[RMDB]
RNA sequence: GGGAACGACUCGAGUAGAGUCGAAAACCGUGACAUUGCGCAAGCAAGGCUGGCGGUAGGUAGUCCUGGGCGGCGACAGCCUUGGACUGCGGCGUAAAGGUGUACCUGGGGCCGUUAAACCUAUCGUGAAAGGCAACUUGGUUCGCCAAGUUGCCAACCUUUGCUAACUGUUCGCAGUUAGCAAAGGAAAAGAAACAACAACAACAAC
Reactivity to DMS in 0.01 (KOAc 150mM, MgCl2 10mM, bicine 150mM(pH8.5), 24C), signal-to-noise 2, nucleotides 027 to 156: c020c020g060u000g000a050c060a090u000u010g000c040g020c230a160a230g040c000a040a030g010g060c020u010g020g000c010g030g000u000a000g040g040u000a040g070u000c000c000u000g020g000g020c010g000g020c060g020a210c190a230g000c020c030u000u000g010g000a010c000u000g010c050g010g000c010g030u000a090a180a050g000g040u000g000u000a090c000c000u010g010g020g030g000c000c010g000u000u010a150a090a190c020c000u000a070u000c020g040u020g000a050a110a100g000g020c000a000a020c000u000u000g020g030u000u010c300g000c000c010a020a060g000u010u000g020c000c010a020a000
Reactivity to 2A3 in 0.01 (KOAc 150mM, MgCl2 10mM, bicine 150mM(pH8.5), 24C), signal-to-noise 3, nucleotides 027 to 156: c000c010g020u020g070a090c120a190u040u050g010c020g030c040a070a040g000c020a030a050g080g050c080u080g060g010c020g000g000u000a010g010g010u020a000g000u000c000c000u030g000g010g000c030g040g040c070g090a060c100a070g000c000c000u000u000g000g000a000c000u000g000c000g010g010c000g010u060a040a040a030g030g000u110g090u290a220c020c010u020g000g000g110g000c010c000g030u040u120a050a090a030c000c000u000a000u020c010g010u020g060a130a080a030g000g000c000a000a000c000u000u000g000g030u080u050c090g000c060c000a000a020g000u000u000g000c000c000a000a000
Structure probing data (DMS and 2A3) for a 207-nucleotide construct.
The 2A3 profile rests on 2,399 reads.
2A3 adducts were read by reverse transcription with SuperScript II with manganese.
Reactivities are given for positions 27 through 156.